[RMDB]
RNA sequence: GGGAACGACUCGAGUAGAGUCGAAAAAAUGUACUGGUGCACAAUCCAGUCUCUCCCACAUGAAAGCGAAGUCCCCGUGGAGCUUUACUGCAGCCUGUAGCUGUGACGCGAUUUUUAAUGCGUAGGGAGAGCGCUAGUACUUCGGUACUAGCGCUCUAAAAGAAACAACAACAACAAC
Reactivity to DMS in 0.01 (KOAc 150mM, MgCl2 10mM, bicine 150mM(pH8.5), 24C), signal-to-noise 1, nucleotides 027 to 126: a080a030u080g050u080a090c000u010g020g000u000g050c090a160c300a250a040u000c000c000a000g050u000c000u000c000u000c000c000c000a120c210a200u000g000a000a000a000g020c100g000a120a070g060u000c120c000c000c100g000u000g000g000a180g000c060u000u000u000a020c070u040g040c020a060g030c000c080u000g050u140a150g120c080u060g020u000g020a000c040g000c000g000a040u010u000u110u090u080a050a030u070g000c000g000u000a070g000g040g000
Reactivity to 2A3 in 0.01 (KOAc 150mM, MgCl2 10mM, bicine 150mM(pH8.5), 24C), signal-to-noise 1, nucleotides 027 to 126: a000a000u150g040u300a010c000u010g000g000u010g160c250a040c070a110a140u050c000c000a000g010u000c000u050c000u000c000c200c000a000c000a040u240g130a010a070a000g000c050g000a000a000g090u040c000c000c040c040g010u040g060g010a050g000c060u100u000u040a010c030u040g000c000a020g010c000c100u230g090u260a000g000c000u000g030u070g030a000c000g050c000g140a050u000u000u000u000u290a160a020u300g000c000g000u030a060g090g040g000
The record gives the reactivity of an RNA of 177 nucleotides to DMS and 2A3. It was measured as part of the RMDB library RFM100. Conditions: 150 mM KOAc, 10 mM MgCl2 and 150 mM bicine (pH 8.5), 24 C. The DMS profile rests on 773 reads.